[RMDB]
RNA sequence: GGGAACGACUCGAGUAGAGUCGAAAAUCGUCCACGUCAACCGGAUUGCCGGCUGCAUCACGCAGGGUGAGGGUGACUUUCUGCGCACUGGUGCCGUCCGGGACCAGAUUAAGCGACGAAAGGCUCACGGCCCUUGUGUAUUCGUACACAAGGGCCGAAAAGAAACAACAACAACAAC
Reactivity to 2A3 in 0.01 (KOAc 150mM, MgCl2 10mM, bicine 150mM(pH8.5), 24C), signal-to-noise 2, nucleotides 027 to 126: u100c000g030u000c010c010a120c070g000u020c020a020a050c060c030g070g000a160u150u290g090c000c010g010g020c000u000g030c000a060u060c040a020c090g020c000a030g000g000g060u070g050a010g020g030g020u110g170a090c000u080u020u030c080u170g070c010g000c000a070c010u000g000g000u100g160c000c000g100u170c110c140g010g020g010a000c000c000a000g000a020u000u250a100a010g000c010g060a050c000g010a100a000a000g070g010c040u040c010a030
Reactivity to DMS in 0.01 (KOAc 150mM, MgCl2 10mM, bicine 150mM(pH8.5), 24C), signal-to-noise 1, nucleotides 027 to 126: u020c030g060u060c000c000a070c130g000u000c130a080a090c020c030g050g000a120u100u000g050c000c060g030g070c080u020g040c110a190u000c110a000c100g050c000a000g010g010g060u060g000a040g000g070g090u000g000a140c000u000u000u000c000u000g000c100g000c140a060c040u010g000g000u050g000c000c000g020u120c290c040g110g000g000a020c000c040a000g000a300u000u040a060a050g020c070g000a080c000g000a000a000a110g020g000c000u050c030a270
Overview: This 177-nucleotide RNA was probed chemically with 2A3 and DMS. For 2A3 the reverse transcriptase was SuperScript II with manganese. For DMS, 1,097 sequencing reads were counted. The data come from the RNA Mapping Database (RMDB), library OK1LIB.